[RMDB]
RNA sequence: GGGAACGACUCGAGUAGAGUCGAAAAGAUAUGGACUAGAACUACAGGGUCAAUUGCGUUGAAAUCGGAAACGAUGGAGCAAUUGUCCUGCUAGUCCUAAGUCAAAACAACUGCUUCGGCAGUUGAACUCACGCAUAUACUUCGGUAUAUGCGUGAGAAAAGAAACAACAACAACAAC
Reactivity to 2A3 in 0.01 (KOAc 150mM, MgCl2 10mM, bicine 150mM(pH8.5), 24C), signal-to-noise 2, nucleotides 027 to 126: g020a000u080a080u150g010g000a010c010u030a010g000a100a020c100u120a070c290a020g050g030g040u230c000a010a000u010u030g020c040g230u300u060g050a040a030a020u020c000g040g010a080a040a000c000g000a000u010g020g000a050g000c000a000a000u000u000g000u000c020c010u010g000c000u000a000g000u000c000c000u010a040a010g020u020c020a060a010a060a130c000a000a000c010u000g050c000u040u080c230g190g000c000a000g000u030u000g010a030a020
Reactivity to DMS in 0.01 (KOAc 150mM, MgCl2 10mM, bicine 150mM(pH8.5), 24C), signal-to-noise 2, nucleotides 027 to 126: g020a040u020a300u020g010g010a010c010u000a030g010a060a030c050u010a300c000a010g010g010g000u000c000a000a000u000u000g000c000g000u000u010g000a040a180a040u020c010g010g000a140a080a170c000g000a010u000g000g000a130g020c000a000a010u000u000g000u000c000c000u000g000c090u010a000g030u000c000c010u000a010a040g000u000c010a060a060a090a180c010a000a010c000u010g000c020u000u020c240g000g000c000a020g030u000u010g000a060a150